Chemical mapping of a 177-nucleotide RNA with DMS and 2A3. For DMS, 2,161 sequencing reads were counted. DMS (dimethyl sulfate) methylates the pairing face of unpaired adenines and cytosines. It was measured as part of the RMDB library OK1LIB. DMS adducts were read by reverse transcription with MarathonRT. The RNA was probed in 150 mM KOAc, 10 mM MgCl2 and 150 mM bicine (pH 8.5) at 24 C. Values cover nucleotides 27 to 126.
RNA sequence: GGGAACGACUCGAGUAGAGUCGAAAAGGGAGAACCGAGCAGAGGCAUAGCGAACUGCGCACGGUGAAGCCUUGAGGGAAGGCCGUAGGACCCGGGUUCGAUUCCCGGCCGCUCCACCGAAGGGCCAAGUGCGCCUAUGAUUCGUCAUAGGCGCACUAAAAGAAACAACAACAACAAC
Reactivity to DMS in 0.01 (KOAc 150mM, MgCl2 10mM, bicine 150mM(pH8.5), 24C), signal-to-noise 2, nucleotides 027 to 126: g000g000g000a040g010a220a000c020c040g050a120g000c030a030g030a190g000g050c020a160u000a130g000c050g050a160a070c030u020g010c040g020c160a140c070g000g000u000g000a130a300g010c000c000u000u010g010a270g000g000g020a050a110g000g000c040c010g030u010a120g100g000a090c160c000c030g010g020g000u050u070c140g020a300u040u020c000c000c010g000g040c030c010g000c000u030c030c080a110c120c050g000a120a050g000g000g010c020c030a150
Reactivity to 2A3 in 0.01 (KOAc 150mM, MgCl2 10mM, bicine 150mM(pH8.5), 24C), signal-to-noise 2, nucleotides 027 to 126: g090g020g000a110g000a040a000c000c000g000a000g000c000a000g010a040g070g090c140a210u200a090g060c020g100a100a060c010u040g040c020g040c020a060c030g040g000u060g010a040a020g030c020c030u030u010g020a100g000g040g000a020a070g020g050c050c020g070u150a180g080g000a100c000c040c040g030g030g000u020u020c030g000a030u020u050c000c000c000g000g010c000c030g040c000u060c010c060a020c000c000g000a000a040g000g000g020c000c000a030